[RMDB]
RNA sequence: GGGAACGACUCGAGUAGAGUCGAAAAUGGUGUGGGUUCCGUCUCACACUUCACACCCUCAAAGUAGCCUUCCUGCAGUUUUGUCUGCAGGUUGUGUGGAAAGUCUGUUCCGUCAGACUUGAAACCGGACGUUCAAUCGAUUCGUCGAUUGAACGUCAAAAGAAACAACAACAACAAC
Reactivity to DMS in 0.01 (KOAc 150mM, MgCl2 10mM, bicine 150mM(pH8.5), 24C), signal-to-noise 2, nucleotides 027 to 126: u000g000g000u000g010u000g010g010g030u000u000c300c170g000u020c000u020c010a030c020a010c010u000u020c200a160c240a260c000c000c020u000c160a130a080a080g010u010a130g000c060c010u000u010c000c010u000g000c000a020g010u000u050u000u010g000u010c010u000g000c000a000g010g000u000u000g000u010g020u000g010g000a140a020a010g010u000c010u000g000u000u030c300c180g000u030c000a000g000a010c000u010u000g000a120a090a060c110c090g000
Reactivity to 2A3 in 0.01 (KOAc 150mM, MgCl2 10mM, bicine 150mM(pH8.5), 24C), signal-to-noise 4, nucleotides 027 to 126: u170g030g000u010g000u010g050g000g000u250u300c090c040g260u080c030u000c000a020c010a000c000u110u100c020a050c010a030c010c050c000u130c130a130a170a000g070u040a010g040c010c000u010u010c000c000u020g020c010a020g000u060u040u280u270g220u190c000u000g000c000a000g000g000u000u000g010u000g010u010g030g020a050a010a000g000u000c000u020g030u120u300c060c040g160u300c010a000g000a000c000u000u040g020a050a020a030c060c040g040